This 177-nucleotide RNA was probed chemically with 2A3 and DMS. Source: RMDB library TTRDEL, as collected in RNAgym. For DMS, 1,588 sequencing reads were counted.
[RMDB]
RNA sequence: GGGAACGACUCGAGUAGAGUCGAAAAGAUAUGGAAGCCUAUUGGGAGUUAUUCGGAAACGAAUAUAGCGAGGAUCAAUGAGGCUUCCUAAGUCAAACGCUUUAAAGCCUUCGGGCUUUAAAGCGAAGACAAAACCUUAGUUCGCUAAGGUUUUGUCAAAAGAAACAACAACAACAAC
Reactivity to 2A3 in 0.01 (KOAc 150mM, MgCl2 10mM, bicine 150mM(pH8.5), 24C), signal-to-noise 1, nucleotides 027 to 126: g010a000u070a030u160g010g000a000a030g000c020c020u020a010u020u020g020g000g030a040g000u020u000a000u010u010c000g030g060a090a020a030c000g000a040a040u280a050u080a130g060c000g050a200g060g000a000u040c010a020a000u130g180a160g060g000c000u010u000c010c010u010a010a010g010u000c010a020a140a140c000g000c010u000u030u020a000a040a010g000c000c000u070u070c300g100g000g000c030u000u010u010a000a000a000g000c000g000a000a000
Reactivity to DMS in 0.01 (KOAc 150mM, MgCl2 10mM, bicine 150mM(pH8.5), 24C), signal-to-noise 2, nucleotides 027 to 126: g000a040u010a300u010g010g000a010a000g000c010c000u000a080u000u000g000g020g010a050g020u000u000a020u000u000c000g010g000a140a080a180c010g000a010a020u010a040u000a050g000c030g010a110g020g000a040u000c000a000a010u000g010a010g000g010c000u000u000c010c000u000a020a080g000u000c020a130a110a260c050g000c000u000u000u000a000a010a000g010c000c000u000u010c240g030g010g020c000u000u000u000a000a010a020g010c000g010a010a050